RNA sequence: GGGAACGACUCGAGUAGAGUCGAAAACGUGCAGCAGACUGACCUGCCGAGCAGCCUGAUUCGCUUCGUAAAACCUGUCAGGAACUGUAACUGCGGACGAUUAUUCGUACGCGAUGGCGGCGUAACAGCCCCCAUCUGUCUCGCGUCGCUCCUGGCCCAAAUCUGCACACUUCGGUGUGCAGAUUUGAAAAGAAACAACAACAACAAC
Reactivity to 2A3 in 0.01 (KOAc 150mM, MgCl2 10mM, bicine 150mM(pH8.5), 24C), signal-to-noise 2, nucleotides 027 to 156: c030g040u080g000c040a020g000c000a000g070a160c010u040g030a080c010c010u030g100c060c040g060a010g010c070a010g030c050c060u110g050a140u110u100c080g030c050u100u080c020g070u080a040a030a100a200c010c050u030g040u060c020a010g010g010a040a050c000u050g040u140a080a020c020u080g030c030g060g060a020c000g070a050u120u000a110u090u180c040g020u160a040c010g000c020g050a000u000g000g000c020g000g000c020g020u070a070a020c030a080g020c000c000c020c000c000a000u000c010u000g060u000c000u000c020g010c010g010u010c000g000c010u000c000c010u010g020g000c020c010